[RMDB]
RNA sequence: GGGAACGACUCGAGUAGAGUCGAAAAACUUUCACUGACUGAACCUUGAGAUGGAGCCGCUUGGCAGAAAGCUAUAUGGUCUGCAAAUGCUGAUAUGCACAAAUCUUUGGUCUUCUGCAGUACUAUAGACUAUAUUUCGCUUCGGCGAAAUAUAGUCAAAAGAAACAACAACAACAAC
Reactivity to DMS in 0.01 (KOAc 150mM, MgCl2 10mM, bicine 150mM(pH8.5), 24C), signal-to-noise 1, nucleotides 027 to 126: a120c060u010u020u000c090a140c020u000g010a100c060u000g000a040a060c100c010u000u000g000a090g000a070u000g010g010a170g040c010c040g000c110u000u000g010g040c010a040g020a030a090a070g010c030u010a070u000a030u020g030g000u000c060u000g050c070a050a010a070u010g030c040u000g010a110u000a080u000g020c040a070c170a130a070a050u000c030u000u000u010g010g000u010c130u000u010c060u010g010c040a030g010u010a110c110u020a100u010a110
Reactivity to 2A3 in 0.01 (KOAc 150mM, MgCl2 10mM, bicine 150mM(pH8.5), 24C), signal-to-noise 1, nucleotides 027 to 126: a000c010u130u190u080c050a030c030u040g200a060c000u040g010a040a050c010c020u010u090g030a040g000a030u020g030g000a000g000c000c020g020c110u070u130g030g000c010a010g040a020a060a000g020c060u060a060u010a050u300g110g010u000c010u010g010c020a030a030a090u130g000c010u000g030a070u080a020u210g040c050a000c070a080a070a040u000c020u020u050u040g010g020u000c000u080u010c010u060g020c010a020g020u000a010c020u090a020u080a100
Chemical mapping of a 177-nucleotide RNA with DMS and 2A3. Conditions: 150 mM KOAc, 10 mM MgCl2 and 150 mM bicine (pH 8.5), 24 C. For 2A3 the reverse transcriptase was SuperScript II with manganese. The DMS profile rests on 807 reads. It was measured as part of the RMDB library OK2TRN.